RNA sequence: GGGAACGACUCGAGUAGAGUCGAAAAAACUCAGCUAGGGAGAGUAUAACAUUCAUGUUGACGAGACCUAGACGAAACACAGAGGAAAAUUAUUAAUCACUGGAUAGUAUUAGUAGUGACUCUGUGUAAAACUCUUCUACGUUCGCGUAGAAGAGAAGAAACUAUAAUACUUCGGUAUUAUAGUUUCAAAAGAAACAACAACAACAAC
Reactivity to 2A3 in 0.01 (KOAc 150mM, MgCl2 10mM, bicine 150mM(pH8.5), 24C), signal-to-noise 5, nucleotides 027 to 156: a000a000c020u020c010a010g000c010u010a000g000g020g000a050g010a050g050u110a180u090a300a020c050a030u130u260c100a090u270g020u040u050g050a050c030g010a020g040a050c000c000u000a010g030a050c010g010a010a040a000c000a000c000a000g020a000g010g040a110a170a080a030u010u000a010u000u020a010a000u040c040a010c020u040g040g160a180u280a300g010u010a020u000u000a000g010u000a000g010u010g020a030c000u000c000u010g000u000g000u010a010a000a000a000c000u000c000u000u000c000u000a000c000g020u030u030c230g000c010g110u000a000g000a010a010g000a000g000a010a020
Reactivity to DMS in 0.01 (KOAc 150mM, MgCl2 10mM, bicine 150mM(pH8.5), 24C), signal-to-noise 2, nucleotides 027 to 156: a090a060c030u000c000a080g010c000u000a020g010g000g020a200g020a160g020u000a070u000a030a030c020a070u010u000c160a070u000g010u000u000g010a130c000g000a300g020a080c000c010u000a040g010a280c080g010a130a120a060c010a000c000a000g000a040g000g000a110a070a100a050u000u000a010u000u000a020a020u000c110a080c040u010g040g010a100u010a090g010u010a040u020u000a010g010u000a020g010u000g010a170c000u000c000u010g040u000g000u000a010a010a050a070c010u000c010u000u010c010u020a000c000g020u000u010c270g040c030g050u000a000g000a020a000g000a010g020a050a090
Chemical mapping of a 207-nucleotide RNA with 2A3 and DMS. Source: RMDB library M2RFPK, as collected in RNAgym. The DMS profile rests on 4,622 reads. The reactions ran in a buffer of 150 mM KOAc, 10 mM MgCl2 and 150 mM bicine (pH 8.5), at 24 C.